[RMDB]
RNA sequence: GGGAACGACUCGAGUAGAGUCGAAAACCGAGGGACGGAGGAGGCUAGGUUAGCCGAAAGAUGGUUAUCGGUUCAAGGACGCAAGGUGACCCUGUUUUUCAGGGUAAGAAGGGGUAGAGAAAAUGCCUCGAGCCAAUGUUCGAGUACCAGGCGCUACGGAUAUUUUGGAGUUCGCUCCAAAAUAUCCAAAAGAAACAACAACAACAAC
Reactivity to 2A3 in 0.01 (KOAc 150mM, MgCl2 10mM, bicine 150mM(pH8.5), 24C), signal-to-noise 2, nucleotides 027 to 156: c000c010g010a030g010g010g010a010c050g020g010a020g030g020a000g020g000c030u060a030g050g020u060u080a010g020c000c030g040a050a050a010g070a040u070g030g000u080u090a060u130c030g010g010u010u050c070a040a000g050g010a010c010g000c040a000a060g020g010u040g040a000c000c000c000u040g050u040u160u000u110u200c000a000g000g030g000u040a020a040g040a040a070g010g000g000g010u040a030g050a020g010a090a050a000a050u110g020c000c010u010c020g000a000g020c050c070a100a040u160g040u050u040c000g030a000g030u020a030c000c010a020g000g000c000g000c060u030a010c080
Reactivity to DMS in 0.01 (KOAc 150mM, MgCl2 10mM, bicine 150mM(pH8.5), 24C), signal-to-noise 2, nucleotides 027 to 156: c000c000g020a100g020g000g040a070c040g010g010a090g020g000a110g020g040c040u000a020g060g010u000u000a100g000c010c020g000a020a080a120g000a060u000g030g030u000u020a100u000c030g040g000u000u010c050a030a150g020g010a090c030g030c030a100a080g000g000u010g010a060c010c000c010u000g040u000u000u000u000u000c010a050g000g020g010u010a010a060g020a090a060g010g000g000g010u000a060g000a140g000a110a060a050a120u020g030c050c010u000c030g010a030g010c000c060a060a140u000g010u000u010c020g010a190g030u000a040c030c050a140g030g000c060g010c000u010a120c190
The data come from the RNA Mapping Database (RMDB), library PDB130.
This 207-nucleotide RNA was probed chemically with 2A3 and DMS.
For 2A3 the reverse transcriptase was SuperScript II with manganese.